This 177-nucleotide RNA was probed chemically with 2A3 and DMS. 2A3 is a SHAPE reagent: it acylates the 2'-hydroxyl of flexible nucleotides of all four kinds. The 2A3 profile rests on 1,603 reads. The RNA was probed in 150 mM KOAc, 10 mM MgCl2 and 150 mM bicine (pH 8.5) at 24 C.
RNA sequence: GGGAACGACUCGAGUAGAGUCGAAAAGCCGUCAAUGGCAUCGCCGAUCCUGGCGUCAUCGACGUCGGGCAGGUACUGGUCAUAUUCAUCGGGCGUAGCGACGGGUUCGGCCUAAGGAUCGUGGACCCUGGAAUUACCUCUUCGGAGGUAAUUCCAGAAAAGAAACAACAACAACAAC
Reactivity to 2A3 in 0.01 (KOAc 150mM, MgCl2 10mM, bicine 150mM(pH8.5), 24C), signal-to-noise 2, nucleotides 027 to 126: g120c000c020g050u040c080a100a120u140g120g000c020a040u100c020g040c020c010g000a100u080c010c000u020g000g040c010g010u030c040a300u190c110g020a020c010g000u010c020g010g030g000c010a040g040g040u070a100c060u070g040g020u080c020a040u060a100u290u080c060a090u080c090g090g140g020c010g000u050a030g010c040g000a030c030g010g000g000u020u030c010g010g000c020c000u050a080a070g020g000a060u030c020g010u060g020g140a080c020c010
Reactivity to DMS in 0.01 (KOAc 150mM, MgCl2 10mM, bicine 150mM(pH8.5), 24C), signal-to-noise 2, nucleotides 027 to 126: g000c000c000g030u000c140a120a150u010g020g000c030a180u000c050g000c020c020g010a110u010c010c050u020g000g010c000g020u010c050a070u000c200g000a010c000g010u000c020g010g000g030c300a070g000g000u010a080c050u010g000g000u000c100a150u020a060u000u000c080a050u010c100g000g020g010c050g000u020a120g010c060g030a020c070g000g000g020u000u000c050g010g020c020c010u020a010a130g000g010a030u000c020g000u000g000g010a150c040c000